An RNA of 177 nucleotides, treated with 2A3 and read out base by base. The reactions ran in a buffer of 150 mM KOAc, 10 mM MgCl2 and 150 mM bicine (pH 8.5), at 24 C.

[RMDB]
RNA sequence: GGGAACGACUCGAGUAGAGUCGAAAAUAAACAAAACAAAAAGAAAAACCCGCACUAUCUUUCAUACGAACUUGGCGGAACGACGAAAGAUAGUGCGGGACACAUCGCUUCCGCCAAGUUCGAAAAACGCACUGUACCAGUUCGCUGGUACAGUGCGAAAAGAAACAACAACAACAAC
Reactivity to 2A3 in 0.01 (KOAc 150mM, MgCl2 10mM, bicine 150mM(pH8.5), 24C), signal-to-noise 1, nucleotides 027 to 126: u170a000a140a000c090a040a010a020a000c140a130a180a090a050a060g110a230a180a110a000a000c000c000c000g070c000a000c000u000a000u050c000u030u040u030c030a030u090a300c030g000a000a000c000u000u000g030g000c000g040g070a140a050c140g190a050c030g030a200a110a000g000a000u000a000g010u000g000c000g000g000g000a000c000a000c000a050u070c020g040c110u040u000c020c030g000c060c040a000a000g000u000u000c000g050a000a000a000a000a000